[RMDB]
RNA sequence: GGGAACGACUCGAGUAGAGUCGAAAAGAAGUGAAUAGGUAUUGUUGAAACCAUCCCAAUAAACCUUUAUGAGGCCCCUAUUCUGAGUUAGGCUGACUCAUGGCUUGAAUGUGGCCAGCAGUAGAAAAGGAACUUGCCACAGUGGUGGGAGGCAUCCAAAGUGUAAUUGGUUCGCCAAUUACACUUUAAAAGAAACAACAACAACAAC
Reactivity to DMS in 0.01 (KOAc 150mM, MgCl2 10mM, bicine 150mM(pH8.5), 24C), signal-to-noise 2, nucleotides 027 to 156: g000a120a140g030u000g050a060a050u010a060g020g010u010a090u010u010g000u010u010g000a080a100a080c050c050a130u000c000c000c020a100a150u010a100a100a140c010c020u000u010u020a150u020g000a040g010g050c080c100c040c010u010a080u000u000c040u000g010a130g030u000u000a090g020g010c020u000g000a090c030u000c050a050u000g000g020c070u010u000g010a030a060u000g020u000g000g020c020c070a070g020c000a100g000u000a170g010a080a090a080a140g020g010a140a030c010u010u000g000c030c030a080c060a150g020u000g010g040u000g000g000g020a050g020g030c060a070u000c040c060
Reactivity to 2A3 in 0.01 (KOAc 150mM, MgCl2 10mM, bicine 150mM(pH8.5), 24C), signal-to-noise 1, nucleotides 027 to 156: g020a100a030g050u040g010a020a020u070a070g000g010u120a090u150u200g010u000u040g050a070a000a000c030c010a070u050c000c020c000a000a010u100a080a070a060c020c000u050u090u120a080u080g120a070g070g010c050c020c020c060u070a020u050u020c070u080g030a040g050u050u100a010g050g020c000u010g020a090c000u000c010a040u080g040g000c030u090u090g060a140a060u090g060u020g020g000c000c000a010g000c010a020g040u180a040g050a070a110a000a000g060g020a040a000c020u010u080g050c010c000a000c000a070g100u120g020g000u030g000g030g030a030g010g030c000a040u040c040c030
This 207-nucleotide RNA was probed chemically with DMS and 2A3. The 2A3 profile rests on 667 reads. Reactivities are given for positions 27 through 156.